[RMDB]
Structure probing data (2A3 and DMS) for a 177-nucleotide construct. Source: RMDB library RFM100, as collected in RNAgym. 2A3 adducts were read by reverse transcription with SuperScript II with manganese.

RNA sequence: GGGAACGACUCGAGUAGAGUCGAAAAUAGAGCCGCGCCUGGGUGGUAGCAGCGAUGACUUAACGGCGAUGAACACCGGGUACGAAACCUGCUACACUUGCGGCCGCUGCGCGGAUGCCACGAACCCAUGAGUGACAGGGUUCGCCCUGUCACUCAUAAAAGAAACAACAACAACAAC
Reactivity to 2A3 in 0.01 (KOAc 150mM, MgCl2 10mM, bicine 150mM(pH8.5), 24C), signal-to-noise 2, nucleotides 027 to 126: u090a010g050a000g050c000c000g030c010g040c000c010u130g100g000g000u080g060g070u020a000g010c020a000g000c010g120a230u080g040a020c050u060u020a080a010c050g010g020c030g240a290u260g120a080a030c010a000c020c000g020g000g050u010a000c000g040a040a050a000c000c000u020g000c000u000a000c020a030c000u040u130g040c020g040g000c000c000g000c010u040g000c000g000c000g000g000a020u090g040c000c040a070c060g020a030a050c010c000c020
Reactivity to DMS in 0.01 (KOAc 150mM, MgCl2 10mM, bicine 150mM(pH8.5), 24C), signal-to-noise 2, nucleotides 027 to 126: u130a170g020a220g060c010c030g050c080g000c170c080u000g010g010g000u000g010g000u010a010g000c020a000g030c190g000a080u000g010a300c300u000u000a120a120c060g010g020c110g040a250u080g020a210a210c090a230c120c010g000g000g000u000a050c010g000a110a080a000c120c010u000g010c010u030a010c000a050c000u030u000g000c040g000g000c000c000g030c050u000g000c020g010c040g000g040a050u000g000c010c040a080c070g010a100a100c000c050c000